[RMDB]
RNA sequence: GGGAACGACUCGAGUAGAGUCGAAAAUGAGGUCUCUGUGUGCGAUGCCAGAACUAUGGAGAAAAUGCAUCCCCUUUGCCGCUUGGGUGGCGAGCUGAACACAAAGAACCGGAGGCAUAGCGGGAAUGAGCUCGUUGUGAAGGACUUCGUAGAGAGAUACCAGGGAAUAGUUCGCUAUUCCCUGGUAAAAAGAAACAACAACAACAAC
Reactivity to 2A3 in 0.01 (KOAc 150mM, MgCl2 10mM, bicine 150mM(pH8.5), 24C), signal-to-noise 2, nucleotides 027 to 156: u110g040a010g050g050u010c030u000c030u070g120u010g070u080g140c030g020a020u030g020c030c000a030g030a060a050c040u040a080u180g090g030a060g080a040a060a050a050u190g030c000a040u000c010c000c010c000u030u090u030g000c000c000g100c120u140u120g140g010g010u080g040g000c040g040a040g040c030u130g070a130a020c050a040c010a160a150a020g040a060a050c000c130g010g010a030g000g010c000a020u000a030g040c140g040g040g060a060a030u080g030a010g030c000u010c000g070u030u040g010u030g040a050a060g090g010a060c010u030u010c000g000u030a010g000a000g000a000g000a130
Reactivity to DMS in 0.01 (KOAc 150mM, MgCl2 10mM, bicine 150mM(pH8.5), 24C), signal-to-noise 2, nucleotides 027 to 156: u010g000a090g000g010u000c010u000c010u010g050u040g020u000g020c020g000a070u020g000c010c010a110g040a120a050c000u020a050u030g040g020a130g020a120a020a070a150u000g020c030a130u000c000c000c010c010u000u010u010g010c040c020g010c010u000u050g060g000g070u020g050g010c040g030a140g040c070u000g020a160a200c070a050c050a080a050a290g020a120a120c000c000g030g010a070g010g000c050a070u000a060g010c110g050g000g020a080a090u000g010a090g000c000u020c060g020u010u000g010u000g010a210a130g010g010a120c080u000u010c030g010u010a170g010a270g030a250g000a290
This 207-nucleotide RNA was probed chemically with 2A3 and DMS. The 2A3 profile rests on 905 reads. The RNA was probed in 150 mM KOAc, 10 mM MgCl2 and 150 mM bicine (pH 8.5) at 24 C. Values cover nucleotides 27 to 156. DMS adducts were read by reverse transcription with MarathonRT. For DMS, 2,174 sequencing reads were counted.